Notes:
The record gives the reactivity of an RNA of 207 nucleotides to 2A3. For 2A3 the reverse transcriptase was SuperScript II with manganese. It was measured as part of the RMDB library RSTRND. The reactions ran in a buffer of 150 mM KOAc, 10 mM MgCl2 and 150 mM bicine (pH 8.5), at 24 C.
RNA sequence: GGGAACGACUCGAGUAGAGUCGAAAAGCCAGUCGGGUGUGAGGAGGGCCUCAAACAAGCUCCUCACACGAGAAACCCGGCUAGUCCUGGUGCGGCUUGCAUCGCGCCGCCGCACCUGGGCAACAUCAUCGAAUUGCUGGAAACCCCUAAAGCUCUUCGUAUAUAACAUGUUCGCAUGUUAUAUACGAAAAGAAACAACAACAACAAC
Reactivity to 2A3 in 0.01 (KOAc 150mM, MgCl2 10mM, bicine 150mM(pH8.5), 24C), signal-to-noise 2, nucleotides 027 to 156: g100c050c030a000g000u010c020g020g030g070u070g000u030g020a010g000g010a010g000g040g020c040c030u150c130a160a140a090c060a040a010g030c010u000c010c000u000c000a010c010a010c000g050a080g050a040a070a020c000c000c000g010g040c000u000a000g000u000c000c010u030g010g000u010g000c010g000g000c000u110u160g010c080a060u300c110g140c120g010c140c020g030c000c000g000c000a000c000c010u020g020g000g000c010a020a030c060a050u160c000a020u010c000g090a170a110u070u080g000c000u040g030g050a080a110a090c000c050c000c000u170a130a070a050g070c020u000c000u020u010